[RMDB]
RNA sequence: GGGAACGACUCGAGUAGAGUCGAAAAAGCCCACUCAUGCAAGGCUGCGACGGAAUGGAAGAUAUCGACGUCAUGGUGACAGACUUCGAAGCGCUAGCGGAUAACGUUAGCGACGACUUCGCGGACGUGAUAGGUGCAAAUUCUAGAGAAUGGGUCACAAUCCCGCGUUGUUCGCAACGCGGGAUUGAAAAGAAACAACAACAACAAC
Reactivity to 2A3 in 0.01 (KOAc 150mM, MgCl2 10mM, bicine 150mM(pH8.5), 24C), signal-to-noise 1, nucleotides 027 to 156: a000g100c030c000c000a100c040u140c040a080u140g050c070a110a050g070g010c010u000g030c030g050a000c030g000g000a180a000u020g130g000a020a000g070a230u010a000u200c100g030a020c030g060u020c020a070u150g050g050u060g060a110c080a000g030a010c010u110u000c030g010a030a030g040c000g000c030u020a020g010c010g070g000a180u200a290a070c010g000u000u000a000g000c000g040a050c030g030a040c000u030u010c080g050c060g000g000a010c060g000u060g050a010u050a080g010g000u030g000c010a000a000a040u060u040c040u000a030g000a000g010a010a000u000g010g010g000u030c030a000
Conditions: 150 mM KOAc, 10 mM MgCl2 and 150 mM bicine (pH 8.5), 24 C. Structure probing data (2A3) for a 207-nucleotide construct. Reactivities are given for positions 27 through 156. For 2A3 the reverse transcriptase was SuperScript II with manganese. The 2A3 profile rests on 549 reads.